Source information
Conditions: 150 mM KOAc, 10 mM MgCl2 and 150 mM bicine (pH 8.5), 24 C. Structure probing data (2A3 and DMS) for a 177-nucleotide construct. Values cover nucleotides 27 to 126. The 2A3 profile rests on 1,284 reads.
[RMDB]
RNA sequence: GGGAACGACUCGAGUAGAGUCGAAAAAGCGUAUCAUACGUGAUACGCAGUGGAGUUUUCUCUCUCCCAGUCCUGGAACAGGGUCACACCCUGAGGAGAAGCAUCAGAGAAUGGGACUGAGUCAUAAACACUAGCGUUACUUCGGUAACGCUAGUGUAAAAGAAACAACAACAACAAC
Reactivity to 2A3 in 0.01 (KOAc 150mM, MgCl2 10mM, bicine 150mM(pH8.5), 24C), signal-to-noise 2, nucleotides 027 to 126: a000g010c010g000u030a030u000c020a000u030a140c300g040u040g000a000u000a020c020g000c010a000g050u070g010g020a030g000u050u030u020u000c000u000c000u000c000u000c000c010c000a000g000u020c020c020u060g000g090a060a040c000a000g010g020g060u080c010a020c000a010c050c000c000u040g000a040g040g070a060g000a100a050g100c040a000u110c020a000g170a010g050a190a140u110g020g000g010a010c050u020g010a000g050u060c000a060u060a180a190
Reactivity to DMS in 0.01 (KOAc 150mM, MgCl2 10mM, bicine 150mM(pH8.5), 24C), signal-to-noise 3, nucleotides 027 to 126: a000g000c000g010u000a010u000c000a010u010a050c240g020u020g000a020u000a000c010g020c000a040g040u010g040g000a130g000u020u010u000u000c000u000c000u000c110u020c000c020c000a110g000u000c020c000u000g000g010a080a180c070a010g020g000g010u010c250a140c150a300c020c010c000u000g000a130g040g000a150g000a070a050g000c100a170u010c020a070g000a060g000a090a040u000g000g000g000a050c080u000g020a020g030u020c150a080u030a040a090